[RMDB]
RNA sequence: GGGAACGACUCGAGUAGAGUCGAAAAGAUAUGGACCCAUUAGAGCGCGAUAAGCUGCACUCGGAAACGAGUGGCAGCUUUUGACGCGUGGAAUGGGUCCUAAGUCAAACGUCUCUUCGGAGACGAACUCCGAAUUUAUGUUCGCAUAAAUUCGGAGAAAAGAAACAACAACAACAAC
Reactivity to DMS in 0.01 (KOAc 150mM, MgCl2 10mM, bicine 150mM(pH8.5), 24C), signal-to-noise 4, nucleotides 027 to 126: g000a040u020a300u010g020g010a020c000c000c010a010u000u010a110g040a300g040c000g010c000g020a200u000a010a020g010c000u000g010c000a040c000u000c000g000g010a140a150a200c000g010a010g030u010g020g030c000a010g000c000u000u010u010u000g040a190c030g020c010g010u010g000g020a080a020u000g010g010g010u000c000c000u010a010a130g000u000c010a090a090a220c020g010u000c010u000c000u000u020c190g030g000a010g000a010c000g010a060a110
Reactivity to 2A3 in 0.01 (KOAc 150mM, MgCl2 10mM, bicine 150mM(pH8.5), 24C), signal-to-noise 2, nucleotides 027 to 126: g020a010u050a070u150g030g010a010c010c040c030a010u020u100a210g280a070g070c030g000c020g080a080u050a180a030g000c010u000g000c010a000c000u010c000g020g000a060a120a040c020g000a010g030u050g120g000c010a000g000c000u000u020u010u020g020a020c030g020c010g000u040g030g170a010a000u000g000g030g010u000c000c000u010a010a020g000u000c030a060a050a100c050g000u000c000u010c000u000u050c270g230g020a010g020a010c010g010a030a020